[RMDB]
RNA sequence: GGGAACGACUCGAGUAGAGUCGAAAACGGUCAACGCUGCCACCUAUAACCGCAAUGAUGUGCUGGACGUACAGGGCGUGGGCGUCGAUCCGCUUUGCUUCAACGCACCCAGCAUCGCCCCGGUCAAGAUAGUACGAGGAUUCGUCCUCGUACUAUCAAAAGAAACAACAACAACAAC
Reactivity to 2A3 in 0.01 (KOAc 150mM, MgCl2 10mM, bicine 150mM(pH8.5), 24C), signal-to-noise 6, nucleotides 027 to 126: c030g000g040u040c030a060a020c050g030c050u080g050c000c010a040c010c020u080a080u060a160a050c020c020g020c060a040a100u190g060a080u120g060u030g080c030u040g010g060a080c040g020u070a040c060a100g040g000g000c040g020u120g030g050g000c020g040u090c050g020a050u040c030c000g000c000u050u060u090g010c000u090u110c030a040a020c040g010c020a060c010c000c000a010g020c020a040u060c030g010c000c000c010c010g020g010u050c020a060a050
Reactivity to DMS in 0.01 (KOAc 150mM, MgCl2 10mM, bicine 150mM(pH8.5), 24C), signal-to-noise 8, nucleotides 027 to 126: c060g000g010u000c030a070a050c090g010c020u000g020c020c050a080c040c030u000a070u000a110a090c050c030g010c070a080a100u010g010a110u020g010u000g010c030u010g020g010a100c100g020u000a050c180a110g000g000g010c040g030u010g010g000g000c010g010u000c100g010a060u010c100c030g010c040u000u000u010g010c030u010u010c170a080a060c100g010c040a090c070c000c020a090g010c090a050u010c090g010c030c010c030c060g010g010u010c100a100a090

This 177-nucleotide RNA was probed chemically with 2A3 and DMS. The reactions ran in a buffer of 150 mM KOAc, 10 mM MgCl2 and 150 mM bicine (pH 8.5), at 24 C. The data come from the RNA Mapping Database (RMDB), library OK2TST.